[RMDB]
RNA sequence: GGGAACGACUCGAGUAGAGUCGAAAAGACGCCAGUUGAUCCUUUUUGCGAUCGUCUCCGUAGUCGCAAUCGUCGUAUUGGGCUGGUACUACCUGCGAAUUCCGAGUCUGGUGGGUAUCGGGCAGUAAUAAAGUCGACAAUUCGUUGUCGACUUUAUAAAAGAAACAACAACAACAAC
Reactivity to 2A3 in 0.01 (KOAc 150mM, MgCl2 10mM, bicine 150mM(pH8.5), 24C), signal-to-noise 6, nucleotides 027 to 126: g060a010c050g020c020c010a050g010u080u080g090a110u080c020c000u070u060u080u130u150g060c080g020a060u030c020g060u080c070u030c060c020g070u120a030g040u020c010g000c030a020a060u060c030g120u030c030g010u080a080u050u140g080g020g010c030u020g040g000u030a070c010u040a030c020c010u020g030c030g040a070a130u150u050c040c020g020a020g070u020c030u030g050g020u050g050g040g020u030a050u060c000g000g030g000c020a020g060u050a010
Reactivity to DMS in 0.01 (KOAc 150mM, MgCl2 10mM, bicine 150mM(pH8.5), 24C), signal-to-noise 5, nucleotides 027 to 126: g010a060c080g010c030c030a070g010u030u010g000a060u010c040c010u000u010u010u020u000g000c050g020a030u000c020g000u030c050u000c060c020g000u020a100g010u010c010g030c020a060a040u030c100g000u020c070g010u010a070u020u010g000g000g000c030u000g010g010u000a040c020u020a080c030c020u000g020c050g010a080a140u040u020c050c050g000a120g000u030c030u010g000g000u000g000g030g020u000a040u000c040g000g010g010c050a070g010u010a060